[RMDB]
RNA sequence: GGGAACGACUCGAGUAGAGUCGAAAAAGCAGUCGAUUCGUCGACUGCUAAUGCGUCGGGACUACAUCACAGGUUCUUCGCUAGCCCUCUUUGGACCAGUAAAAAAGAGCUUAUUCGUAAGCUCUAAUCGACUCUGAGAAUUCGUUCUCAGAGUCGAAAAAGAAACAACAACAACAAC
Reactivity to DMS in 0.01 (KOAc 150mM, MgCl2 10mM, bicine 150mM(pH8.5), 24C), signal-to-noise 1, nucleotides 027 to 126: a030g000c010a010g020u010c000g010a010u000u000c130g040u000c000g000a000c000u010g000c000u000a000a040u010g000c020g010u010c130g000g010g000a060c050u020a090c260a050u000c110a090c160a190g010g000u000u010c000u000u000c020g000c010u000a110g000c000c000c000u010c050u000u000u000g000g000a120c050c060a070g010u010a000a060a070a030a080a000g020a020g000c000u000u000a030u010u010c210g000u000a000a010g000c010u000c000u000a010a030